Structure probing data (2A3 and DMS) for a 177-nucleotide construct. The 2A3 profile rests on 1,146 reads. The DMS profile rests on 1,635 reads. The data come from the RNA Mapping Database (RMDB), library OK2TRN.
RNA sequence: GGGAACGACUCGAGUAGAGUCGAAAAUCUGGCGACAAACAGUCCGCAGGGGCCGUGGUGGCUGCUCGGCUGGUGUGAGCGGGUGCCGGAAGCGGAUGAGGUGCUGCCUGCGCCGCUGCCGCCGUACUCUCCGUUCACUGUUCGCAGUGAACGGAGAAAAAGAAACAACAACAACAAC
Reactivity to 2A3 in 0.01 (KOAc 150mM, MgCl2 10mM, bicine 150mM(pH8.5), 24C), signal-to-noise 1, nucleotides 027 to 126: u000c060u060g050g080c020g000a030c030a040a290a020c020a020g040u080c010c030g060c110a000g000g000g000g000c000c000g020u100g160g190u200g020g020c030u100g170c010u020c060g000g000c030u040g000g000u060g030u030g040a070g000c030g010g080g030u040g000c010c000g000g010a000a000g000c030g030g110a140u110g120a120g000g240u250g030c010u050g040c020c010u050g040c060g000c000c000g060c020u020g040c010c010g000c000c000g000u070a090c020
Reactivity to DMS in 0.01 (KOAc 150mM, MgCl2 10mM, bicine 150mM(pH8.5), 24C), signal-to-noise 1, nucleotides 027 to 126: u000c030u000g050g010c010g000a070c060a070a120a100c050a040g000u010c010c020g040c220a030g040g000g000g010c020c010g040u000g010g010u010g040g020c010u000g000c020u010c010g000g020c050u000g010g020u010g020u050g010a070g020c010g000g020g010u000g030c100c070g000g000a060a040g000c010g050g000a220u020g020a100g000g010u000g010c060u010g000c020c000u000g000c010g000c010c010g010c010u000g020c040c060g040c050c040g010u030a080c190